Structure probing data (DMS and 2A3) for a 170-nucleotide construct. 2A3 adducts were read by reverse transcription with SuperScript II with manganese. The reactions ran in a buffer of 150 mM KOAc, 10 mM MgCl2 and 150 mM bicine (pH 8.5), at 24 C. It was measured as part of the RMDB library 15KLIB. For 2A3, 73,157 sequencing reads were counted. The DMS profile rests on 110,192 reads.
RNA sequence: GGGAACGACUCGAGUAGAGUCGAAAACUUCCCUGCUGAGGUUCUUCCCUCCGGCGGCCAGUUGCUUCUUCUUGUUCUCGAGGGCCUUCCUUCGUCGGUGAUCCCGCCUCUCCUCGUCGGUGAAACCAAACUACAUAGUUCGCUAUGUAGAAAAGAAACAACAACAACAAC
Reactivity to DMS in 0.01 (KOAc 150mM, MgCl2 10mM, bicine 150mM(pH8.5), 24C), signal-to-noise 9, nucleotides 027 to 129: c260u010u010c000c000c000u000g010c080u030g000a110g060g000u000u010c050u030u040c030c010c000u020c020c020g020g000c090g020g030c020c020a080g010u040u020g000c070u020u020c000u010u010c030u030u020g040u030u000c000u000c030g000a130g000g000g010c040c030u010u010c020c040u010u020c040g000u020c060g030g010u020g010a090u030c000c000c000g010c040c030u020c000u000c010c020u000c020g020u000c050g020g000u050g000a070a060a110c070c060a060a050a170
Reactivity to 2A3 in 0.01 (KOAc 150mM, MgCl2 10mM, bicine 150mM(pH8.5), 24C), signal-to-noise 9, nucleotides 027 to 129: c020u050u040c000c000c000u020g010c070u050g030a080g020g000u090u060c020u080u070c020c000c000u020c010c020g040g000c020g010g010c020c010a040g030u060u060g060c010u020u030c000u040u020c010u040u120g070u110u020c030u010c020g030a070g000g030g020c010c000u040u060c020c000u060u060c020g090u020c030g020g030u050g030a060u030c000c000c010g020c010c000u020c010u010c000c000u020c010g060u030c020g010g040u070g040a030a010a010c020c000a060a040a020